[RMDB]
RNA sequence: GGGAACGACUCGAGUAGAGUCGAAAACGGUGGGCACGGCGGCAGAAGGGCACGGCAAGCGUAGCGCAGGAGGCAGCAGGAUCAGACAGCCGGACAGGGAAAACUGCAGCAGCCUGUCCAAUGCUCAAUCUUUUGUUUAAUUCGUUAAACAAAAGAUAAAAGAAACAACAACAACAAC
Reactivity to DMS in 0.01 (KOAc 150mM, MgCl2 10mM, bicine 150mM(pH8.5), 24C), signal-to-noise 9, nucleotides 027 to 126: c090g010g020u010g000g010g030c050a070c090g010g020c060g010g010c050a050g010a110a100g010g010g020c050a060c090g010g010c070a070a080g020c080g020u010a070g010c110g010c050a080g000g000a080g000g010c050a060g000c050a050g000g000a080u010c080a090g010a100c090a080g010c060c170g000g010a030c040a030g000g010g010a050a050a070a110c070u000g000c060a070g010c050a120g010c010c010u000g000u000c020c010a070a060u010g010c040u010c120a110
Reactivity to 2A3 in 0.01 (KOAc 150mM, MgCl2 10mM, bicine 150mM(pH8.5), 24C), signal-to-noise 5, nucleotides 027 to 126: c020g040g000u050g020g020g000c060a030c060g040g000c030g020g000c020a010g050a090a060g020g020g000c040a020c040g020g000c050a070a030g030c030g110u110a020g020c040g000c070a030g010g070a030g040g000c010a000g000c000a010g030g030a020u070c010a010g120a180c030a020g040c040c060g010g000a010c010a020g010g000g060a040a140a050a050c070u100g010c010a040g010c010a010g030c010c000u010g000u000c010c010a010a030u110g010c020u030c050a040

This 177-nucleotide RNA was probed chemically with DMS and 2A3. Reactivities are given for positions 27 through 126. Source: RMDB library OK2TRN, as collected in RNAgym. Conditions: 150 mM KOAc, 10 mM MgCl2 and 150 mM bicine (pH 8.5), 24 C. For 2A3, 17,404 sequencing reads were counted.